[RMDB]
RNA sequence: GGGAACGACUCGAGUAGAGUCGAAAAGGCGACAAGUUCGCUUGUCGCCACGGGGUCCAGCCUGGAAACGCUGGAGGUAUUGGAAUGGUCGGGCCGCCAUUCAACGCGGGACAUUCGUGUCCCGCAAUUGUUUAUCGUGAUUCGUCACGAUAAACAAAAAAGAAACAACAACAACAAC
Reactivity to DMS in 0.01 (KOAc 150mM, MgCl2 10mM, bicine 150mM(pH8.5), 24C), signal-to-noise 3, nucleotides 027 to 126: g020g030c000g000a000c000a010a010g020u010u010c200g020c000u000u010g000u010c010g030c000c000a010c160g010g000g000g000u000c000c000a020g020c000c090u000g030g010a140a150a080c300g010c000u000g020g000a020g000g000u000a120u000u000g010g010a020a010u000g000g010u000c000g000g000g000c010c010g000c000c000a000u000u000c000a120a090c210g010c000g000g000g000a010c000a060u000u010c150g010u000g000u000c000c000c000g010c000a000a000
Reactivity to 2A3 in 0.01 (KOAc 150mM, MgCl2 10mM, bicine 150mM(pH8.5), 24C), signal-to-noise 2, nucleotides 027 to 126: g000g010c000g010a000c000a010a010g010u000u090c140g010c080u000u000g000u000c000g030c000c000a000c010g050g010g010g020u040c000c000a010g010c020c050u150g220g100a100a080a020c060g000c010u000g000g040a000g010g000u180a230u190u270g150g000a020a000u000g000g000u010c010g030g010g000c000c000g000c010c000a000u010u010c020a040a040c100g000c000g000g010g000a000c000a000u010u100c230g030u030g010u020c000c000c000g000c000a000a000